[RMDB]
RNA sequence: GGGAACGACUCGAGUAGAGUCGAAAAGUACACCCCCGGUGACUCGCUGCGUCGGGCGGUCGAUUCAACCGCGCCGACGUCCUCGGUGCAGCCGCGAGCGUUGCCAGCGAUCGCCGGCCUGAGUGUGAACCGUUAAACCCUUCGGGGUUUAACGGUUAAAAGAAACAACAACAACAAC
Reactivity to DMS in 0.01 (KOAc 150mM, MgCl2 10mM, bicine 150mM(pH8.5), 24C), signal-to-noise 2, nucleotides 027 to 126: g040u000a030c090a030c030c000c200c000c020g010g050u000g030a000c140u000c000g000c000u000g010c030g020u000c000g000g010g010c000g000g000u000c080g000a210u040u050c210a150a010c000c000g000c020g010c000c000g000a000c010g010u000c050c070u010c160g040g010u010g000c060a040g010c000c010g010c220g000a130g000c060g040u060u000g000c080c000a030g000c020g000a030u000c000g040c000c000g000g010c050c090u040g000a050g010u000g010u010g020

Structure probing data (DMS) for a 177-nucleotide construct. Conditions: 150 mM KOAc, 10 mM MgCl2 and 150 mM bicine (pH 8.5), 24 C. Values cover nucleotides 27 to 126.